[RMDB]
RNA sequence: GGGAACGACUCGAGUAGAGUCGAAAAGAUAUGGAUCAGCGAGUGGCAAACACGACGAAGAGAACUCGGAAACGAGUUCUCAGAGUGUUUGAACUACCAUAACGCUGAUCCUAAGUCAAAACACUUAUAGGAGUGCUUCGGCACUCCUAUAAGUGAACACACUAAGCUUCUUCGGAAGCUUAGUGUGAAAAGAAACAACAACAACAAC
Reactivity to DMS in 0.01 (KOAc 150mM, MgCl2 10mM, bicine 150mM(pH8.5), 24C), signal-to-noise 1, nucleotides 027 to 156: g000a030u000a040u020g000g000a000u000c010a030g030c000g030a300g030u000g010g000c020a030a010a010c000a000c030g010a190c270g000a090a290g000a020g010a010a030c010u000c000g030g020a010a020a130c000g010a050g010u030u000c010u000c000a010g000a090g020u010g010u000u000u000g010a050a100c020u010a300c020c000a010u000a030a100c010g010c000u020g010a010u000c010c020u000a000a030g000u000c020a050a130a120a120c000a030c000u000u000a020u010a010g010g000a050g040u000g010c020u000u020c270g060g040c010a010c000u090c010c000u000a000u000a000a020g060u000g000a060a170
Reactivity to 2A3 in 0.01 (KOAc 150mM, MgCl2 10mM, bicine 150mM(pH8.5), 24C), signal-to-noise 2, nucleotides 027 to 156: g000a000u010a000u030g000g000a000u000c000a000g000c000g020a010g020u010g000g000c010a000a000a010c020a010c070g300a100c000g000a040a010g000a000g000a000a000c000u000c000g000g000a000a000a000c000g000a000g000u000u000c000u010c000a000g000a000g000u000g000u000u000u010g000a000a000c020u100a070c080c000a000u020a160a040c010g000c000u000g000a000u000c000c000u000a000a000g000u000c000a010a000a080a090c010a000c000u000u010a000u000a000g000g010a010g000u010g000c010u040u120c260g060g000c000a000c000u000c000c000u000a000u000a000a000g000u000g000a000a000